[RMDB]
RNA sequence: GGGAACGACUCGAGUAGAGUCGAAAAGUAUCAAGCGACCUGUCCCGAGCCCUUGAGACAGCAAAAAUUGUAGCGAGGGAAAUCGGUAUUAGCGCCCCAUUGGCCGACGCCCGCCUGCGUGAGCGGACAUAGGACGGUCGUUCGCGACCGUCCUAUGAAAAGAAACAACAACAACAAC
Reactivity to DMS in 0.01 (KOAc 150mM, MgCl2 10mM, bicine 150mM(pH8.5), 24C), signal-to-noise 2, nucleotides 027 to 126: g030u040a070u070c130a180a120g010c080g040a100c070c020u010g000u000c120c020c000g000a120g010c000c000c000u020u020g020a060g040a040c000a000g050c060a070a050a030a100a130u080u000g000u000a040g000c000g010a010g040g020g000a010a050a150u000c030g000g010u000a120u010u070a070g000c100g050c070c000c070c050a100u000u020g000g010c030c000g030a060c150g010c150c060c040g010c010c070u020g000c050g000u030g000a070g010c000g030g040a120
Reactivity to 2A3 in 0.01 (KOAc 150mM, MgCl2 10mM, bicine 150mM(pH8.5), 24C), signal-to-noise 2, nucleotides 027 to 126: g080u080a090u200c040a080a030g010c020g050a090c000c020u050g050u110c000c000c010g060a130g270c000c010c000u000u020g000a020g040a030c000a000g080c060a020a070a040a040a160u100u050g020u000a040g040c000g030a000g000g020g000a000a110a140u010c000g000g000u010a060u080u180a030g040c020g030c000c000c010c010a060u110u090g040g000c000c000g010a010c030g030c000c000c000g050c040c010u100g000c050g050u090g030a020g020c010g000g000a010